Overview: Structure probing data (DMS and 2A3) for a 177-nucleotide construct. Conditions: 150 mM KOAc, 10 mM MgCl2 and 150 mM bicine (pH 8.5), 24 C. For DMS, 1,427 sequencing reads were counted. Reactivities are rounded to 0.1 and cut off at 0 and 3. Reactivities are given for positions 27 through 126.
[RMDB]
RNA sequence: GGGAACGACUCGAGUAGAGUCGAAAAUCUAAGAGCGUAACACACACUCAGACUGUACGACAGUCUGACACACACAUACGCAAGUGUAUCGUGUGUGUGAUAUCGAUGUAGCACGAAAAUGAAAGAAGUCGGAAUUACAAUUCGUUGUAAUUCCGACAAAAGAAACAACAACAACAAC
Reactivity to DMS in 0.01 (KOAc 150mM, MgCl2 10mM, bicine 150mM(pH8.5), 24C), signal-to-noise 2, nucleotides 027 to 126: u010c010u000a080a140g050a080g010c060g030u000a070a120c140a090c040a050c000a130c060u010c000a000g000a030c000u010g000u000a120c250g010a140c030a010g000u000c000u000g000a020c120a000c040a010c000a010c020a030u000a060c060g020c200a110a080g020u020g010u000a030u010c140g010u010g000u000g000u000g020u020g000a130u010a110u010c090g010a050u000g000u000a050g020c150a030c060g010a020a030a070a100u010g000a050a140a080g010a060a120
Reactivity to 2A3 in 0.01 (KOAc 150mM, MgCl2 10mM, bicine 150mM(pH8.5), 24C), signal-to-noise 3, nucleotides 027 to 126: u050c030u050a090a000g020a010g150c030g030u070a100a010c010a010c000a000c020a010c070u020c020a010g010a010c000u020g050u170a150c130g160a070c190a010g020u000c000u000g030a000c020a020c000a000c000a000c000a040u070a040c060g080c160a180a150g090u060g020u210a040u080c090g000u000g000u010g000u000g010u000g010a020u040a040u140c030g010a050u070g030u070a010g020c010a010c100g060a070a060a050a020u260g080a080a070a090g080a080a000